This 177-nucleotide RNA was probed chemically with 2A3 and DMS. The DMS profile rests on 724 reads. For 2A3, 1,122 sequencing reads were counted. The reactions ran in a buffer of 150 mM KOAc, 10 mM MgCl2 and 150 mM bicine (pH 8.5), at 24 C.
[RMDB]
RNA sequence: GGGAACGACUCGAGUAGAGUCGAAAACAUUGAAUCAGGUCAACUGGAGACGUGGAUUUAUCGCACAGUGGAAGAGCACAAACCAUUGGUUUGGGUCUCGCAUCCGUUAAUUGGUCCUUGAAAACCGCUGGUAACACUUGUUCGCAAGUGUUACCAGAAAAGAAACAACAACAACAAC
Reactivity to 2A3 in 0.01 (KOAc 150mM, MgCl2 10mM, bicine 150mM(pH8.5), 24C), signal-to-noise 2, nucleotides 027 to 126: c060a000u010u080g080a070a060u040c020a040g030g000u030c040a050a010c070u060g080g040a040g050a070c070g020u050g000g030a100u010u090u190a100u070c080g000c000a040c010a020g030u090g040g020a110a020g010a010g040c040a010c000a060a030a010c020c080a210u080u290g000g030u000u020u030g020g000g040u000c000u000c010g040c010a070u000c010c010g050u090u050a050a070u070u030g020g000u020c000c020u030u030g040a050a050a010a030c020c020g000
Reactivity to DMS in 0.01 (KOAc 150mM, MgCl2 10mM, bicine 150mM(pH8.5), 24C), signal-to-noise 1, nucleotides 027 to 126: c060a060u010u000g000a090a110u000c030a040g010g000u010c080a030a100c030u000g000g010a080g010a060c080g030u010g000g000a120u010u000u010a040u000c080g030c020a060c060a100g030u010g030g000a060a130g010a060g020c010a070c030a020a020a040c010c000a130u000u030g010g010u000u000u000g000g010g000u000c010u020c030g050c140a110u000c030c010g010u010u000a100a100u000u000g010g010u010c000c000u000u010g010a090a010a220a170c050c020g000